[RMDB]
RNA sequence: GGGAACGACUCGAGUAGAGUCGAAAAUACCACCCCUAUGCAAUUACUUUUUGUACAGGCGAGUGCACGCAGUAUACUACCACCCCUAUGCAAUUACUUUUAGUACAGGCGAGUACACGCAGUAUACUACUCGAAUUCAGUUCGCUGAAUUCGAGUAAAAAGAAACAACAACAACAAC
Reactivity to 2A3 in 0.01 (KOAc 150mM, MgCl2 10mM, bicine 150mM(pH8.5), 24C), signal-to-noise 4, nucleotides 027 to 126: u150a020c040c000a070c020c010c000c000u070a060u150g020c050a040a090u150u050a250c090u150u140u050u030u110g030u040a030c030a040g020g080c040g040a030g020u070g010c040a000c050g000c010a020g020u130a040u010a120c040u020a060c010c030a020c010c010c000c020u000a070u080g060c010a030a040u160u040a120c020u040u130u040u140a020g010u050a000c000a000g000g110c010g050a030g050u050a020c040a020c030g050c000a010g010u090a020u020a090c030
Reactivity to DMS in 0.01 (KOAc 150mM, MgCl2 10mM, bicine 150mM(pH8.5), 24C), signal-to-noise 1, nucleotides 027 to 126: u020a200c050c000a150c030c010c010c000u020a130u000g030c000a070a110u000u030a090c090u050u020u000u000u000g020u000a000c090a090g000g000c110g000a160g010u000g000c020a070c070g030c030a040g000u010a160u070a020c020u000a140c070c050a030c000c000c030c020u000a070u010g000c140a000a000u010u020a050c060u000u000u030u000a030g030u000a000c170a040g020g000c010g080a210g000u030a030c140a110c010g000c050a060g000u000a080u060a140c090
Conditions: 150 mM KOAc, 10 mM MgCl2 and 150 mM bicine (pH 8.5), 24 C.
Structure probing data (2A3 and DMS) for a 177-nucleotide construct.
Reactivities are given for positions 27 through 126.